Structure probing data (DMS and 2A3) for a 177-nucleotide construct. For DMS, 1,920 sequencing reads were counted.
RNA sequence: GGGAACGACUCGAGUAGAGUCGAAAACAAUUCUUGGAAAGCUAGUUUGAAGGAUAGUUCUGGAACUUUGUUAGGACGCUUAGAGUAUGAUGGUACUUCUUUUUCUAGUGAUUCACCUGCUAGCUUAAGCCCCUACUAUGUUCGCAUAGUAGGGGCUAAAAGAAACAACAACAACAAC
Reactivity to DMS in 0.01 (KOAc 150mM, MgCl2 10mM, bicine 150mM(pH8.5), 24C), signal-to-noise 2, nucleotides 027 to 126: c090a090a210u010u000c040u000u000g000g010a110a050a060g000c000u010a020g000u000u020u000g010a130a060g040g000a100u000a030g000u010u000c040u000g010g010a050a040c170u010u000u000g030u020u000a050g010g020a070c180g000c040u000u020a080g010a090g000u000a070u010g000a120u010g020g020u010a030c050u000u010c040u000u000u010u000u000c020u000a010g020u000g010a080u000u000c090a100c080c020u000g000c020u000a020g000c040u000u000a080
Reactivity to 2A3 in 0.01 (KOAc 150mM, MgCl2 10mM, bicine 150mM(pH8.5), 24C), signal-to-noise 2, nucleotides 027 to 126: c000a050a060u010u060c050u060u100g060g080a190a020a000g000c010u020a020g000u030u090u230g070a090a020g010g020a020u040a060g110u080u000c020u050g020g020a050a070c050u000u140u120g090u120u090a040g040g050a030c050g030c050u080u090a020g010a000g170u160a110u130g120a100u160g080g000u020a020c010u060u130c040u030u010u000u040u040c020u030a010g050u010g070a060u000u020c010a040c000c000u030g020c020u000a070g020c020u000u010a030

Values cover nucleotides 27 to 126.